[RMDB]
Structure probing data (2A3) for a 177-nucleotide construct.
RNA sequence: GGGAACGACUCGAGUAGAGUCGAAAAGCGCAUGCUUAUCGGGACAACAACCCAACGCGGCAGGUGUACCGUUGGGCAAAACGUUUACUGGCGCGUUUCGAUUGAGGUAGUUUCGACGCGAACAAGGCGCCACGUCUGUUUUCGAACAGACGUGGCGAAAAGAAACAACAACAACAAC
Reactivity to 2A3 in 0.01 (KOAc 150mM, MgCl2 10mM, bicine 150mM(pH8.5), 24C), signal-to-noise 1, nucleotides 027 to 126: g010c000g000c020a000u250g060c010u030u040a030u050c000g000g020g070a050c000a050a000c000a000a130c000c010c000a050a070c010g010c060g080g000c000a010g300g060u100g110u300a060c000c000g000u000u000g020g140g000c000a010a010a010a010c000g000u000u110u000a040c010u020g090g000c030g000c000g010u070u000u000c020g000a060u000u100g030a060g000g010u140a060g010u000u000u000c000g010a000c010g040c060g070a050a120c000a000a000g210g010
2A3 adducts were read by reverse transcription with SuperScript II with manganese.
The reactions ran in a buffer of 150 mM KOAc, 10 mM MgCl2 and 150 mM bicine (pH 8.5), at 24 C.
Reactivities are rounded to 0.1 and cut off at 0 and 3.
Reactivities are given for positions 27 through 126.